Description: The record gives the reactivity of an RNA of 177 nucleotides to DMS and 2A3. DMS (dimethyl sulfate) methylates the pairing face of unpaired adenines and cytosines. It was measured as part of the RMDB library TTRDEL. The DMS profile rests on 1,458 reads. The 2A3 profile rests on 3,157 reads. Conditions: 150 mM KOAc, 10 mM MgCl2 and 150 mM bicine (pH 8.5), 24 C.

RNA sequence: GGGAACGACUCGAGUAGAGUCGAAAAGAUAUGGAGCACCACCAUCGAUCACAACGUAACAUCUAUCGGAAACGAUAGUGGUUGUGGGAGGUGGGAUUCCUAAGUCAAACGCUAGUUCGCUAGCGAACUACCGCUUGCUGUUCGCAGCAAGCGGUAGAAAAGAAACAACAACAACAAC
Reactivity to DMS in 0.01 (KOAc 150mM, MgCl2 10mM, bicine 150mM(pH8.5), 24C), signal-to-noise 2, nucleotides 027 to 126: g010a020u000a300u010g000g000a020g010c300a080c020c020a060c000c000a280u000c090g050a180u020c020a000c030a000a000c000g000u000a060a080c200a040u000c000u000a000u000c000g010g000a120a060a200c000g000a000u000a010g020u010g010g010u000u000g010u000g010g000g020a050g020g040u000g010g000g000a040u020u000c000c000u020a090a190g000u000c020a060a070a150c060g020c010u000a000g010u000u010c240g030c000u000a010g000c000g000a070a080
Reactivity to 2A3 in 0.01 (KOAc 150mM, MgCl2 10mM, bicine 150mM(pH8.5), 24C), signal-to-noise 3, nucleotides 027 to 126: g040a010u070a000u200g000g010a010g060c090a050c080c010a050c000c010a180u300c050g090a090u090c030a010c000a000a060c030g140u200a130a040c020a250u160c010u020a010u000c010g050g050a020a060a070c000g010a010u010a000g000u000g040g010u010u010g010u020g020g030g020a040g000g000u030g000g000g000a000u030u040c000c000u060a110a040g050u040c070a140a050a030c030g010c040u010a000g050u080u050c270g000c190u000a010g020c010g000a070a040